The data come from the RNA Mapping Database (RMDB), library OK1LIB.
This 177-nucleotide RNA was probed chemically with DMS and 2A3.
For 2A3, 3,632 sequencing reads were counted.
2A3 adducts were read by reverse transcription with SuperScript II with manganese.
RNA sequence: GGGAACGACUCGAGUAGAGUCGAAAAGACGCUGAUGCGAUCGACUGUAAGAUAGAUAGAGUGAGCAGACAGAUACGUACGGCAAGUAUCGUCGCCAGAAAUACAGUCGCAAAUUGCCGUACGAAGACACUGCGAUAGUCUUCGGACUAUCGCAGUGAAAAGAAACAACAACAACAAC
Reactivity to DMS in 0.01 (KOAc 150mM, MgCl2 10mM, bicine 150mM(pH8.5), 24C), signal-to-noise 2, nucleotides 027 to 126: g000a090c090g010c010u000g030a080u040g060c000g000a160u040c010g000a060c000u010g030u000a050a090g040a100u020a060g020a210u060a010g000a060g010u080g010a130g000c010a120g030a000c000a100g020a110u020a050c010g000u000a000c020g010g020c000a030a060g010u000a020u000c150g000u010c020g000c020c050a120g000a100a080a080u020a000c010a030g030u000c010g000c240a020a060a050u020u000g000c000c000g000u050a090c070g000a120a050g020a300
Reactivity to 2A3 in 0.01 (KOAc 150mM, MgCl2 10mM, bicine 150mM(pH8.5), 24C), signal-to-noise 4, nucleotides 027 to 126: g110a000c030g000c060u190g050a140u300g020c030g040a050u030c010g000a010c000u000g000u020a050a040g080a230u170a050g110a060u150a040g180a060g140u110g010a070g020c120a100g040a060c010a030g060a020u040a080c020g040u040a000c020g030g000c010a020a040g020u010a030u040c000g000u000c000g010c000c000a040g110a010a030a000u070a030c020a010g000u000c000g000c030a070a110a090u020u040g010c010c010g000u020a020c050g010a020a000g030a030